[RMDB]
The record gives the reactivity of an RNA of 177 nucleotides to 2A3 and DMS. DMS adducts were read by reverse transcription with MarathonRT. Reactivities are given for positions 27 through 126. The RNA was probed in 150 mM KOAc, 10 mM MgCl2 and 150 mM bicine (pH 8.5) at 24 C.

RNA sequence: GGGAACGACUCGAGUAGAGUCGAAAAGAAAAGACGAUGUUAUUAUGAUUCUCGAGUAAUAGCAGGUCAUGCGUACUACUCGCCGAACGGAAGGCAGACUGUUCGCGCAAUGAAACGAGAAAGAAAACAGCACUAAUUACUUCGGUAAUUAGUGCUGAAAAGAAACAACAACAACAAC
Reactivity to 2A3 in 0.01 (KOAc 150mM, MgCl2 10mM, bicine 150mM(pH8.5), 24C), signal-to-noise 6, nucleotides 027 to 126: g070a010a090a000a030g040a010c050g050a130u020g010u010u010a020u020u000a020u080g110a210u130u020c020u010c020g010a010g020u030a010a010u000a020g000c010a020g040g050u100c080a090u150g030c020g040u030a010c020u020a030c010u010c060g000c010c020g040a110a080c060g040g100a090a060g140g000c020a040g070a220c030u040g010u030u050c020g000c000g000c070a030a150u210g120a140a050a040c030g000a000g040a030a070a020g090a030a090a020a000
Reactivity to DMS in 0.01 (KOAc 150mM, MgCl2 10mM, bicine 150mM(pH8.5), 24C), signal-to-noise 4, nucleotides 027 to 126: g010a090a020a110a090g020a090c070g010a090u020g000u010u010a020u010u010a020u000g000a080u010u040c020u010c030g000a290g050u000a010a020u010a010g000c010a030g000g010u010c100a040u020g010c040g000u010a050c050u010a070c090u020c040g000c230c010g000a030a010c030g000g010a110a100g000g010c270a060g000a090c010u000g000u000u000c000g010c160g000c070a060a080u080g010a050a070a090c060g000a020g010a010a070a120g020a060a040a080a170